[RMDB]
RNA sequence: GGGAACGACUCGAGUAGAGUCGAAAACAAACUUCUGCCUUCUUGUUUGCACCCUUACAUCUAUCGGGUUACCUUUGCCACAGCUAAUGAAUCCUCAGCGUUGCUAAUUAGGAUGUUUAACGAAAAGUAUCCCCUUUCCUUUCGAGGAAAGGGGAUAAAAAGAAACAACAACAACAAC
Reactivity to DMS in 0.01 (KOAc 150mM, MgCl2 10mM, bicine 150mM(pH8.5), 24C), signal-to-noise 2, nucleotides 027 to 126: c040a080a080a090c120u010u000c040u000g000c080c070u000u000c040u000u010g010u000u010u000g010c050a100c020c010c020u000u010a100c090a050u000c070u010a040u010c100g020g010g020u010u000a040c090c060u000u000u000g020c040c040a050c090a070g000c020u010a070a120u000g010a110a080u000c010c020u010c130a080g010c030g010u010u010g010c040u000a060a090u010u010a080g000g010a030u000g000u000u000u000a050a080c020g020a040a100a060a100g000
Conditions: 150 mM KOAc, 10 mM MgCl2 and 150 mM bicine (pH 8.5), 24 C. An RNA of 177 nucleotides, treated with DMS and read out base by base. DMS adducts were read by reverse transcription with MarathonRT. Values cover nucleotides 27 to 126.